[RMDB]
RNA sequence: GGGAACGACUCGAGUAGAGUCGAAAAGAAAGAAAGAAAGAAAGGUAUGAAGUCCUAUUCACACUGGAUAGGAUAAACUUCAUAUUGAUCGUGUAUGUGCUAACGCACAUACACGAAUGCGCAUGCAGAACUGCAUGCAUGAACAUACGGUGUGCAAUAAUUUACUCGUCUUCGGACGAGUAAAUUAAAAAGAAACAACAACAACAAC
Reactivity to DMS in 0.01 (KOAc 150mM, MgCl2 10mM, bicine 150mM(pH8.5), 24C), signal-to-noise 1, nucleotides 027 to 156: g000a060a100a160g010a150a030a020g040a150a080a090g000a080a120a240g000g000u020a000u000g030a000a020g050u010c000c010u000a000u000u000c020a180c150a160c150u010g010g000a020u000a020g000g010a140u000a030a140a050c020u000u020c000a000u000a030u000u010g000a150u000c000g030u020g020u000a020u000g030u000g000c000u020a080a270c300g020c000a010c000a020u000a000c000a000c000g050a020a000u000g000c050g000c000a000u000g010c010a070g000a090a210c130u000g000c050a050u000g020c000a040u000g000a050a090c050a060u000a160c100g020g000u000g010u000g000c050a070a190
Reactivity to 2A3 in 0.01 (KOAc 150mM, MgCl2 10mM, bicine 150mM(pH8.5), 24C), signal-to-noise 3, nucleotides 027 to 156: g040a010a040a030g060a050a050a000g060a060a110a000g060a130a100a010g020g010u010a010u000g010a000a010g030u000c000c010u010a000u010u020c050a040c040a060c210u150g000g000a000u000a000g010g000a040u070a020a050a020c000u000u010c000a000u020a000u010u030g030a060u000c010g000u000g000u000a000u000g030u000g000c100u130a090a070c180g010c000a010c010a000u000a010c000a000c000g000a000a000u020g000c010g010c000a000u000g020c030a000g040a290a050c130u050g000c010a010u000g000c000a020u050g050a060a030c070a030u140a080c050g060g000u010g000u030g060c010a040a040
Notes:
The record gives the reactivity of an RNA of 207 nucleotides to DMS and 2A3. DMS adducts were read by reverse transcription with MarathonRT. The data come from the RNA Mapping Database (RMDB), library OK3TST. 2A3 adducts were read by reverse transcription with SuperScript II with manganese. For DMS, 1,996 sequencing reads were counted.